An RNA of 207 nucleotides, treated with DMS and 2A3 and read out base by base. Conditions: 150 mM KOAc, 10 mM MgCl2 and 150 mM bicine (pH 8.5), 24 C. Reactivities are given for positions 27 through 156.

RNA sequence: GGGAACGACUCGAGUAGAGUCGAAAAGGCCUUCCUUCGUCGGUGGGCCCGUCUCUCCUCGUCGGUGAAGCCUCCCUUGUUACUCUUUUUCCCUGGUCCGGAGUCGACCUCCAUCCGAUCUGUUCGGGAUCUCUUCGCCGGGGGAGCUCCCUCCCCACAAGUUACAUAGCUUCGGCUAUGUAACUUGAAAAGAAACAACAACAACAAC
Reactivity to DMS in 0.01 (KOAc 150mM, MgCl2 10mM, bicine 150mM(pH8.5), 24C), signal-to-noise 1, nucleotides 027 to 156: g000g000c000c000u020u000c020c020u000u010c300g000u010c300g030g000u000g020g010g050c010c000c030g020u000c050u000c020u000c020c040u000c060g050u020c050g040g050u000g020a070a060g040c060c040u000c000c020c000u000u010g020u010u010a090c040u000c020u010u000u030u020u010c030c000c000u040g020g000u000c050c060g020g010a120g040u000c100g010a110c060c020u000c010c070a190u010c060c050g000a150u010c030u000g060u010u000c090g030g020g020a060u000c020u000c020u000u010c020g020c000c030g080g000g030g040g000a050g020c080u000c010c040c000u000c000c000c000c020a300
Reactivity to 2A3 in 0.01 (KOAc 150mM, MgCl2 10mM, bicine 150mM(pH8.5), 24C), signal-to-noise 1, nucleotides 027 to 156: g000g000c000c010u000u000c020c000u070u230c150g180u060c090g020g000u000g030g000g000c020c010c010g110u060c020u010c000u030c020c000u020c010g190u030c020g010g000u090g050a030a020g010c060c020u050c000c000c030u010u040g150u090u090a180c060u050c050u200u110u140u150u080c040c020c070u050g040g000u040c050c060g060g020a040g040u060c040g130a180c030c000u040c050c010a070u000c020c020g080a050u020c050u100g060u080u100c050g010g000g020a030u040c020u000c000u100u050c020g020c000c000g000g000g000g000g000a000g000c000u040c000c000c000u000c000c000c000c020a020